[RMDB]
RNA sequence: GGGAACGACUCGAGUAGAGUCGAAAAAGUACGAUCGACAUGGCUAGGUGUCAUGUGUCUAGAUGGUACAGCUGUGCCAUGCCAUGCUCUAGCAUGCAGUACGUGUCAUGACUGAUCCUAGGCGGUAACGGCACUUAUGAUUCGUCAUAAGUGCCGUAAAAGAAACAACAACAACAAC
Reactivity to DMS in 0.01 (KOAc 150mM, MgCl2 10mM, bicine 150mM(pH8.5), 24C), signal-to-noise 4, nucleotides 027 to 126: a090g000u000a030c050g010a120u010c040g020a130c010a020u000g020g010c000u010a060g000g010u000g000u030c010a020u000g010u010g020u020c120u020a100g010a050u000g010g020u000a010c010a210g000c180u020g020u000g000c000c000a040u000g020c030c010a030u000g010c020u000c080u000a050g010c020a050u000g010c070a080g010u000a070c050g020u010g010u000c100a090u010g000a060c070u000g000a080u000c020c000u000a080g000g020c060g010g000u000a110
Reactivity to 2A3 in 0.01 (KOAc 150mM, MgCl2 10mM, bicine 150mM(pH8.5), 24C), signal-to-noise 2, nucleotides 027 to 126: a000g080u060a030c050g030a110u110c070g080a090c030a020u040g150g000c010u050a050g030g210u080g080u210c010a010u020g110u010g010u010c000u070a130g020a140u030g030g000u000a020c010a080g110c140u240g000u010g000c020c010a000u050g010c000c000a010u040g030c010u020c000u060a020g030c000a000u060g050c020a020g030u050a020c070g060u040g060u090c030a060u160g060a050c020u040g000a030u030c000c000u020a050g060g000c030g010g050u020a050